[RMDB]
RNA sequence: GGGAACGACUCGAGUAGAGUCGAAAAACAGAAAAAAGGAGUUUAAAUUAGAUUUGCAAACGGACGGUACUAAAUACCGUAACUUUUACGUCUAACUUAUCGUUAACUCUGCAAAAAGAAAACAAGAAAAACAAGCGUGAGUUCGCUCACGCUUGAACUGUAUAAUGUCCUUCGGGACAUUAUACAGAAAAGAAACAACAACAACAAC
Reactivity to 2A3 in 0.01 (KOAc 150mM, MgCl2 10mM, bicine 150mM(pH8.5), 24C), signal-to-noise 3, nucleotides 027 to 156: a010c030a020g130a020a100a010a010a020a090g050g000a040g000u080u060u090a050a070a040u060u020a030g020a020u080u080u190g050c060a050a050a000c020g050g030a000c000g010g000u030a040c050u280a060a100a180u070a020c000c000g020u010a010a100c020u020u020u040u110a020c030g000u000c010u010a030a050c020u060u090a050u160c020g090u010u010a010a020c000u010c020u040g000c040a000a040a140a000a000g090a050a070a020a010c100a060a070g120a110a090a010a010a010c000a000a000g000c010g000u000g010a000g010u030u090c180g050c070u000c010a000c000g000c000u000u000g000a010a010
Reactivity to DMS in 0.01 (KOAc 150mM, MgCl2 10mM, bicine 150mM(pH8.5), 24C), signal-to-noise 1, nucleotides 027 to 156: a240c020a230g000a030a060a070a090a100a070g010g000a060g020u000u010u000a010a010a010u000u000a010g010a090u000u000u000g030c010a000a000a030c020g020g030a040c000g020g000u010a020c010u010a040a060a300u000a080c000c000g000u010a000a040c010u000u000u000u010a020c020g000u010c000u010a020a040c020u000u000a010u000c080g000u010u000a040a000c010u000c000u010g000c080a030a040a020a100a030g000a090a040a130a100c060a000a030g000a060a090a130a040a100c000a000a010g020c010g100u000g000a010g050u000u010c300g000c010u000c000a000c000g070c000u000u000g000a000a140